Source information:
An RNA of 207 nucleotides, treated with 2A3 and read out base by base. The RNA was probed in 150 mM KOAc, 10 mM MgCl2 and 150 mM bicine (pH 8.5) at 24 C.

[RMDB]
RNA sequence: GGGAACGACUCGAGUAGAGUCGAAAACUUACCUUCAACAGUAUACCAAACAUAGUCCUCGUGUGGUGUAUGCUCUUUUAUCUCGAGGAGCCGAUACGAGGAUACGUAAUAAUCUUGAUUGUACACCCAUCAUGGAAUACAUAAAGAACGAUUGUGCGAGAUACGAUUGGUUCGCCAAUCGUAUCUCAAAAGAAACAACAACAACAAC
Reactivity to 2A3 in 0.01 (KOAc 150mM, MgCl2 10mM, bicine 150mM(pH8.5), 24C), signal-to-noise 2, nucleotides 027 to 156: c010u030u080a060c000c000u110u100c090a120a070c000a090g080u060a070u110a150c030c040a120a080a020c050a070u160a040g070u030c000c010u010c040g000u000g010u000g040g110u110g040u110a130u160g000c010u000c020u120u090u030u090a190u120c170u070c130g060a030g000g000a000g020c000c030g080a020u000a060c020g010a030g000g000a000u050a020c000g070u020a000a190u080a110a080u100c030u050u010g060a060u080u000g030u050a000c000a080c130c010c010a020u130c030a060u230g110g000a030a030u100a080c030a030u140a080a070a030g060a170a010c140g160a200u110u010g000u080g050c060